[RMDB]
RNA sequence: GGGAACGACUCGAGUAGAGUCGAAAAUAAAAACGUGACAAUCCGUUUGAAACCCGGUGAACAAUUAUCAGAGUUUACAAGGAAAGCAAAUAAAAUAACAUUUGUGCGCCAAUCCGGAAAUGGAAUGCAAUCCGUUAUAGUUCGCUAUAACGGAUUGAAAAGAAACAACAACAACAAC
Reactivity to DMS in 0.01 (KOAc 150mM, MgCl2 10mM, bicine 150mM(pH8.5), 24C), signal-to-noise 5, nucleotides 027 to 126: u010a060a090a030a030a030c030g020u000g030a200c170a120a150u000c110c020g000u010u000u000g000a080a110a160c040c020c040g010g020u000g000a040a030c030a080a080u010u020a050u010c180a100g010a200g010u000u000u000a030c040a090a100g010g000a070a080a140g000c020a030a050a040u000a050a040a050a080u010a100a070c110a110u010u000u010g020u000g000c200g020c040c030a050a090u000c030c020g000g000a050a080a070u020g000g000a070a110u010g010
Reactivity to 2A3 in 0.01 (KOAc 150mM, MgCl2 10mM, bicine 150mM(pH8.5), 24C), signal-to-noise 2, nucleotides 027 to 126: u080a040a120a010a000a000c020g000u040g080a010c060a040a130u000c030c020g020u040u020u100g140a170a140a100c030c010c010g040g010u030g010a040a020c040a070a170u130u150a080u300c060a020g020a010g190u000u030u050a030c040a100a060g070g000a110a030a030g000c040a020a040a030u110a050a180a050a070u150a060a000c030a050u060u040u060g030u030g000c030g000c060c000a030a030u000c000c000g030g000a000a200a060u090g000g040a030a070u110g040

Chemical mapping of a 177-nucleotide RNA with DMS and 2A3. Values are in units of 0.01, from 0 to 300, in steps of 10. For 2A3, 1,721 sequencing reads were counted.